[RMDB]
RNA sequence: GGGAACGACUCGAGUAGAGUCGAAAAAAGUUAGCCAUGUAUGGUGAUGUGUACCUGUAGUCCUAGUAAAUUAAUCAGGAAAGCUGAGGUGGGAAGUUCACUUGAGCCGAGGAACUCAGGGUUAUAGUGAGCCAUGGUUGUGCUACUGCACUCCAGCGCUUAUUGACGAAUUCGUUCGUCAAUAAGCAAAAGAAACAACAACAACAAC
Reactivity to DMS in 0.01 (KOAc 150mM, MgCl2 10mM, bicine 150mM(pH8.5), 24C), signal-to-noise 1, nucleotides 027 to 156: a060a030g060u000u000a120g000c020c010a120u000g000u000a040u000g040g000u000g020a130u010g020u010g030u000a050c070c000u000g000u000a050g050u000c000c010u020a130g000u010a110a020a150u000u000a120a060u010c100a060g000g000a080a100a130g020c030u010g000a050g040g010u000g020g010g010a090a080g010u000u000c020a070c020u020u000g010a020g030c020c040g010a180g020g000a070a060c010u000c030a060g000g010g010u000u000a080u000a080g020u000g000a130g000c060c030a100u000g010g020u000u010g020u000g020c020u020a090c070u000g010c040a060c090u000c040c020a080g000c300
Reactivity to 2A3 in 0.01 (KOAc 150mM, MgCl2 10mM, bicine 150mM(pH8.5), 24C), signal-to-noise 2, nucleotides 027 to 156: a000a000g090u070u030a010g000c020c000a050u100g100u160a080u050g050g080u070g010a140u110g090u030g000u040a120c000c000u010g040u070a020g020u000c000c020u060a070g050u150a050a070a120u170u110a070a050u090c050a030g020g010a130a050a020g000c020u060g030a020g000g030u030g000g020g010a080a120g010u090u080c000a000c000u030u050g080a000g000c030c020g000a020g000g060a070a090c040u000c060a040g040g000g030u060u060a080u020a060g100u020g030a020g000c020c020a060u020g080g030u060u040g040u070g010c000u060a080c010u110g020c020a000c020u040c000c000a010g020c020